[RMDB]
RNA sequence: GGGAACGACUCGAGUAGAGUCGAAAAGACAGCAGCACCUCGUCAUGGACGACGAGCCGCAUGUUCGGGGUGAAGCCCGCCUCGUGCAGGCGCAGUACAGCCGCGCCAGUAACGUCACGUGACGAGCUCUGGAUCAGAUAGUUGAGCGCCGAGUAGGUCAACACUUUUACUUCGGUAAAAGUGUUGAAAAAGAAACAACAACAACAAC
Reactivity to DMS in 0.01 (KOAc 150mM, MgCl2 10mM, bicine 150mM(pH8.5), 24C), signal-to-noise 2, nucleotides 027 to 156: g010a150c040a060g020c050a120g000c020a080c100c010u070c000g030u010c000a030u010g020g020a180c040g020a040c020g020a160g000c030c070g030c070a020u000g010u000u000c020g050g010g010g050u020g000a070a140g020c070c040c020g000c000c000u010c010g050u000g030c010a160g010g030c030g030c000a020g030u010a150c120a130g000c030c030g030c010g060c010c010a170g010u000a050a110c040g020u010c000a080c060g010u000g000a050c010g000a030g000c090u010c030u010g030g010a120u010c090a150g020a090u010a100g010u010u000g030a120g000c040g000c020c030g010a100g020u010a080g010g000
Reactivity to 2A3 in 0.01 (KOAc 150mM, MgCl2 10mM, bicine 150mM(pH8.5), 24C), signal-to-noise 2, nucleotides 027 to 156: g130a010c050a010g040c010a010g020c010a040c060c020u000c000g000u000c010a020u030g070g050a050c050g010a000c020g020a040g050c010c030g040c050a040u040g010u010u030c020g000g020g000g010u040g070a080a050g030c010c040c030g010c010c010u010c010g040u030g000c070a040g000g000c000g000c020a040g040u140a120c020a100g020c050c030g010c030g000c010c000a030g020u090a120a060c010g000u000c010a010c180g010u040g000a000c010g010a010g020c020u010c010u010g030g000a030u070c030a010g110a140u120a070g070u090u120g030a010g000c020g020c010c010g000a020g030u080a030g050g050

The record gives the reactivity of an RNA of 207 nucleotides to DMS and 2A3. Source: RMDB library OK3TST, as collected in RNAgym. Reactivities are rounded to 0.1 and cut off at 0 and 3.